Background:
The record gives the reactivity of an RNA of 177 nucleotides to DMS. Values cover nucleotides 27 to 126. For DMS, 1,175 sequencing reads were counted.
RNA sequence: GGGAACGACUCGAGUAGAGUCGAAAAGAUAUGGAGUACUGCUCCCGAAGGACAACAGCGGACGUAACAUCGCAUUCGGAAACGAAUGCGUGGUCCGACAUGUCUUAGGGAGCAGUACUCCUAAGUCGUUGUAGUAGCAGUUCGCUGCUACUACAACAAAAGAAACAACAACAACAAC
Reactivity to DMS in 0.01 (KOAc 150mM, MgCl2 10mM, bicine 150mM(pH8.5), 24C), signal-to-noise 1, nucleotides 027 to 126: g000a100u020a300u040g000g010a000g000u000a010c010u000g000c000u010c000c000c000g010a210a300g000g020a010c020a040a080c300a200g010c000g020g010a040c000g000u000a070a120c160a050u020c000g000c010a020u000u020c010g000g000a100a140a100c000g000a020a010u010g000c000g000u010g020g010u010c010c000g010a040c150a170u010g000u000c010u000u000a300g000g010g020a010g000c000a000g000u000a020c000u000c000c000u000a000a070g000u020c070